This 177-nucleotide RNA was probed chemically with DMS and 2A3.
2A3 adducts were read by reverse transcription with SuperScript II with manganese.
For DMS, 16,827 sequencing reads were counted.
Values cover nucleotides 27 to 126.
[RMDB]
RNA sequence: GGGAACGACUCGAGUAGAGUCGAAAAUUUCUGGAAGUUCUUCGCCAUCAACAUGGCCUCGGGUGGCCUGGCUGGUGCCGGAUCGCUGCUGAUCGUGUACCCGCUGGACUUCGCGCGUACCCGCCUGCUAAUGGGAAAGUUUCGACUUUCCCAUUAGAAAAGAAACAACAACAACAAC
Reactivity to DMS in 0.01 (KOAc 150mM, MgCl2 10mM, bicine 150mM(pH8.5), 24C), signal-to-noise 8, nucleotides 027 to 126: u000u000u010c030u010g010g010a080a070g000u000u000c040u000u000c110g010c050c010a050u010c090a080a110c140a110u000g010g000c020c060u000c070g000g010g020u000g010g010c030c030u000g010g010c020u000g000g010u000g010c040c060g000g010a040u000c030g010c160u010g020c150u010g010a030u000c010g010u000g010u000a040c020c010c060g000c030u000g010g000a050c040u000u000c050g010c080g010c100g010u000a100c030c020c020g010c110c070u010g010
Reactivity to 2A3 in 0.01 (KOAc 150mM, MgCl2 10mM, bicine 150mM(pH8.5), 24C), signal-to-noise 5, nucleotides 027 to 126: u020u030u010c040u050g040g050a070a030g040u050u040c020u080u070c050g000c010c010a040u040c040a020a110c020a150u100g030g010c010c020u050c030g100g010g020u030g010g030c010c010u010g040g000c030u010g020g020u020g030c020c020g100g040a030u030c040g040c180u280g020c080u150g060a030u040c030g040u030g000u140a040c000c010c020g010c020u020g000g020a030c020u050u040c070g030c010g000c010g070u030a080c010c010c000g040c000c050u100g030